[RMDB]
RNA sequence: GGGAACGACUCGAGUAGAGUCGAAAAUUGGUAGCCUUCAAGACCUGACUAGCAAAUCCAGCCUUAAUUUUUUCAUGAUUGAUUAAUGGGUCGUAUUGGUAUUUAUAAACUUCAUCCAUAUCUCUAGAUACUGAUUCUGGACAUAGCUUUCCGACUGUCUAACUGGGCAUUUCGAUGCCCAGUUAGAAAAAGAAACAACAACAACAAC
Reactivity to 2A3 in 0.01 (KOAc 150mM, MgCl2 10mM, bicine 150mM(pH8.5), 24C), signal-to-noise 1, nucleotides 027 to 156: u060u060g040g000u040a030g010c000c000u010u030c100a040a000g040a040c010c030u000g030a010c040u040a000g060c010a000a000a170u030c010c030a010g030c000c000u090u070a140a120u040u070u020u050u120u130c100a080u110g150a120u120u040g000a000u010u180a070a020u080g030g000g000u040c030g000u050a060u010u070g000g000u030a010u020u110u000a170u110a090a110a110c040u120u030c040a050u020c030c000a040u020a080u120c080u020c000u020a040g000a030u050a070c010u080g010a050u090u050c040u100g040g000a030c010a060u110a010g000c000u020u030u040c020c000g050a070c040u060g040